Chemical mapping of a 177-nucleotide RNA with DMS and 2A3. For DMS, 1,337 sequencing reads were counted. For DMS the reverse transcriptase was MarathonRT. For 2A3 the reverse transcriptase was SuperScript II with manganese. For 2A3, 3,156 sequencing reads were counted. The RNA was probed in 150 mM KOAc, 10 mM MgCl2 and 150 mM bicine (pH 8.5) at 24 C.
RNA sequence: GGGAACGACUCGAGUAGAGUCGAAAAGAUAUGGAGCGUCUACCCACCUCGCGAGGGAGAUCGGAAACGAUCUCCUCCCCACCGACGAGAGGACGCUCCUAAGUCAAAACAGGAGUUCGCUCCUGAAGAGUGUACAAAGGUUCGCCUUUGUACACUCAAAAGAAACAACAACAACAAC
Reactivity to DMS in 0.01 (KOAc 150mM, MgCl2 10mM, bicine 150mM(pH8.5), 24C), signal-to-noise 2, nucleotides 027 to 126: g020a060u010a180u000g030g000a010g000c010g000u000c000u000a100c010c010c110a300c080c000u000c000g010c040g020a070g010g000g000a000g010a000u000c000g020g010a090a090a190c000g030a000u000c000u000c000c000u000c060c050c070c050a300c170c060g000a120c000g010a090g000a140g000g000a010c020g020c010u000c000c060u000a000a090g000u000c120a030a090a150a120c020a010g020g000a010g000u020u000c250g050c020u000c010c010u000g000a060a110
Reactivity to 2A3 in 0.01 (KOAc 150mM, MgCl2 10mM, bicine 150mM(pH8.5), 24C), signal-to-noise 3, nucleotides 027 to 126: g080a040u150a090u230g000g000a000g000c000g010u000c020u070a270c040c040c050a050c000c010u000c000g010c070g030a060g020g050g000a010g000a000u010c010g000g050a030a060a050c000g000a000u000c010u010c000c000u010c000c000c010c000a100c040c120g300a300c030g010a030g010a010g020g010a010c000g000c000u010c020c000u000a000a010g010u040c060a020a010a190a290c020a020g000g050a020g040u130u230c230g090c210u020c020c000u020g010a020a030